RNA sequence: GGGAACGACUCGAGUAGAGUCGAAAAUAGCGAACUAGGAUUUUAUGCGUCAAGUGUUCACAGGCUGGGGAGUCGCCGUGAAACGAAAAGCAGAAAGCGUGCUGCUUACGAUAUAAUUUCCGCACCCAUAAGAAGUCUCUGUUCGCAGAGACUUCAAGUCGGUGUAAAGAUUCGUCUUUACACCGACAAAAGAAACAACAACAACAAC
Reactivity to 2A3 in 0.01 (KOAc 150mM, MgCl2 10mM, bicine 150mM(pH8.5), 24C), signal-to-noise 6, nucleotides 027 to 156: u090a010g020c010g020a030a020c000u020a070g020g000a030u010u030u010u000a020u040g010c000g020u030c090a090a060g020u070g040u270u020c020a020c060a090g000g030c020u100g020g000g020g040a070g100u110c030g010c010c000g010u010g000a030a000a000c010g020a020a040a030a000g010c000a000g080a090a140a020g200c110g100u160g030c010u000g010c000u010u010a010c010g020a010u010a000u000a120a030u010u010u010c000c000g010c030a050c000c010c010a020u070a100a070g000a000a000g000u000c000u000c000u010g020u030u020c060g000c020a000g000a000g000a000c000u000u000c000a000a010
Reactivity to DMS in 0.01 (KOAc 150mM, MgCl2 10mM, bicine 150mM(pH8.5), 24C), signal-to-noise 1, nucleotides 027 to 156: u010a080g000c030g010a090a080c100u010a100g000g010a020u000u000u000u000a030u020g010c140g000u000c060a050a170g040u000g020u000u000c000a040c000a100g080g000c040u000g040g010g030g000a130g000u000c020g000c010c040g030u010g000a020a030a050c040g020a260a030a030a020g000c000a010g000a090a060a130g000c230g020u000g050c020u000g000c000u000u000a050c020g010a090u000a060u000a030a090u000u000u010c010c010g000c110a150c020c000c040a120u000a050a150g000a030a010g020u000c010u000c010u000g040u000u000c180g080c010a000g000a010g000a010c000u010u000c000a020a070